[RMDB]
This 207-nucleotide RNA was probed chemically with 2A3 and DMS.
For 2A3, 6,378 sequencing reads were counted.
It was measured as part of the RMDB library RNAMAK.
2A3 adducts were read by reverse transcription with SuperScript II with manganese.
For DMS, 4,152 sequencing reads were counted.
For DMS the reverse transcriptase was MarathonRT.
RNA sequence: GGGAACGACUCGAGUAGAGUCGAAAACCCGAUCUUCGGAUCGGGAAAAAAGCGUACUACAACACGCUCGCCCAUCAACAGCAUCUCCCAAAUAGGAGAUGACAUGAUGGCGAGAACUACGUGUUGUAUCGCAAAAACCGCGUGUUCGCACGCGGAACCCAACAUAGUAAUUCGUUACUAUGUUGGGAAAAGAAACAACAACAACAAC
Reactivity to 2A3 in 0.01 (KOAc 150mM, MgCl2 10mM, bicine 150mM(pH8.5), 24C), signal-to-noise 5, nucleotides 027 to 156: c000c000c000g000a010u000c010u050u110c280g160g020a010u020c010g000g020g010a150a020a010a000a000a010g040c060g030u110a110c030u000a000c010a000a000c000a000c010g010c000u000c000g040c040c050c020a000u000c010a010a110c040a060g030c000a000u000c000u050c010c020c020a190a300a120u300a140g000g010a000g000a000u000g080a030c000a020u060g000a000u000g000g000c010g000a010g010a040a040c120u270a050c040g000u000g000u000u000g000u000a000u120c010g000c010a050a060a010a010a000c000c000g000c010g000u010g020u030u080c230g000c140a020c000g010c000g000g000a010a010
Reactivity to DMS in 0.01 (KOAc 150mM, MgCl2 10mM, bicine 150mM(pH8.5), 24C), signal-to-noise 2, nucleotides 027 to 156: c000c000c010g010a000u000c000u000u030c300g020g020a010u000c000g060g000g020a000a000a020a110a020a070g020c020g020u020a040c120u010a030c000a020a040c000a020c000g010c000u010c000g020c050c020c040a010u000c000a040a060c050a190g000c000a000u000c000u000c000c000c000a060a220a190u020a070g000g010a010g010a000u000g000a040c070a300u000g020a020u000g020g000c060g010a040g000a100a080c030u000a080c010g010u000g010u000u000g000u000a010u000c030g010c000a080a040a040a130a050c000c000g000c000g030u000g020u000u000c300g000c000a000c020g020c000g020g010a000a010